[RMDB]
RNA sequence: GGGAACGACUCGAGUAGAGUCGAAAAAGGAAAGGAGCGGAACUCUACCAGAGUGUGCAGAAGAUGCUCCGAGCACGCAACGUCCCAGCAACUGUGGACCUCUGCUACGCAAUCCUCAGAAUGAAGAUGGAUGUAUCUAUUUCGAUAGAUACAUCCAAAAAGAAACAACAACAACAAC
Reactivity to 2A3 in 0.01 (KOAc 150mM, MgCl2 10mM, bicine 150mM(pH8.5), 24C), signal-to-noise 4, nucleotides 027 to 126: a010g050g020a050a020a010g000g010a010g000c020g030g020a060a050c010u000c010u040a070c020c040a030g100a070g300u220g040u060g040c050a020g040a300a000g030a050u090g000c030u000c010c000g000a010g000c040a010c040g000c010a010a170c080g010u000c000c020c000a010g030c040a050a150c110u050g040u220g030g000a020c000c020u050c030u030g010c020u040a020c120g000c020a010a120u000c000c000u020c010a100g100a160a140u240g040a090a060g090a090
Reactivity to DMS in 0.01 (KOAc 150mM, MgCl2 10mM, bicine 150mM(pH8.5), 24C), signal-to-noise 9, nucleotides 027 to 126: a050g010g010a080a130a170g000g010a020g020c020g000g000a170a150c060u000c010u000a040c050c050a180g010a110g020u010g010u010g030c070a040g000a050a040g010a300u020g000c010u000c000c010g000a080g000c050a090c190g000c040a050a070c300g010u000c000c000c010a070g000c160a100a090c100u010g010u010g010g000a050c050c040u010c070u000g010c020u000a060c160g000c060a100a150u000c000c010u000c100a100g010a080a070u010g010a080a080g000a200